[RMDB]
RNA sequence: GGGAACGACUCGAGUAGAGUCGAAAAGAAGACGUUGAAGCUGCCGACGUUUCCGCUGCCCAGGUUGAAGUCGCCGAGAUUUGCGCUGCCGAUGUUCAACUGGCCCAGGUUGGCAAGGCCCGCGUUGCAGGCUCGUUUAAUUCGUUAAACGAGCCUGAAAAGAAACAACAACAACAAC
Reactivity to DMS in 0.01 (KOAc 150mM, MgCl2 10mM, bicine 150mM(pH8.5), 24C), signal-to-noise 2, nucleotides 027 to 126: g020a130a060g000a020c070g000u000u010g040a060a140g020c000u000g040c020c010g000a040c020g000u000u010u020c030c020g040c080u010g020c060c030c020a100g020g000u000u010g000a070a150g030u000c010g000c020c020g010a040g000a090u040u030u040g000c070g040c010u000g040c050c010g000a040u020g010u030u040c020a030a050c050u000g010g000c000c040c030a120g000g010u020u000g020g010c020a040a130g000g000c070c050c010g000c070g000u000u000g030
Reactivity to 2A3 in 0.01 (KOAc 150mM, MgCl2 10mM, bicine 150mM(pH8.5), 24C), signal-to-noise 2, nucleotides 027 to 126: g190a040a030g060a030c090g060u020u070g050a080a010g000c000u020g000c010c010g030a080c010g000u000u030u000c010c000g040c070u100g000c020c000c000a000g140g030u080u110g030a040a010g050u040c020g000c030c030g130a140g000a230u080u090u300g030c060g010c000u000g000c020c000g060a090u060g010u090u070c030a010a000c000u000g060g010c000c020c030a000g030g030u030u030g060g030c030a010a020g000g030c000c050c030g000c000g050u010u040g000
An RNA of 177 nucleotides, treated with DMS and 2A3 and read out base by base. The 2A3 profile rests on 867 reads. For 2A3 the reverse transcriptase was SuperScript II with manganese. The DMS profile rests on 3,921 reads. The RNA was probed in 150 mM KOAc, 10 mM MgCl2 and 150 mM bicine (pH 8.5) at 24 C.